[RMDB]
RNA sequence: GGGAACGACUCGAGUAGAGUCGAAAACUGCGCUGCCCGCAUCUGGCACAGCUGCCAUCAGGACUUUCUCUUGGAGGGAAACGCGUGUCCGACGCCUCGUUGCUGUACACGCGUCCGCAGCUGGCUCUGGGUGCGCUUGAUGGACCUCCUGAGGCGACCUAACAUCUGACUUCGGUCAGAUGUUAGGAAAAGAAACAACAACAACAAC
Reactivity to 2A3 in 0.01 (KOAc 150mM, MgCl2 10mM, bicine 150mM(pH8.5), 24C), signal-to-noise 1, nucleotides 027 to 156: c010u050g050c070g000c070u230g040c020c010c050g030c020a130u170c130u110g010g040c010a000c030a300g030c000u000g010c030c000a210u120c060a040g080g040a020c020u090u250u000c090u070c000u070u110g080g080a050g030g030g060a000a090a050c010g000c000g000u010g000u000c040c000g120a240c030g000c000c080u210c110g300u300u140g030c020u080g010u090a010c010a010c000g020c010g030u010c000c030g000c010a000g030c000u000g000g000c030u030c070u110g000g000g000u000g000c000g000c000u010u090g090a110u000g010g110a040c000c060u000c020c000u030g010a050g000g000c000g010a020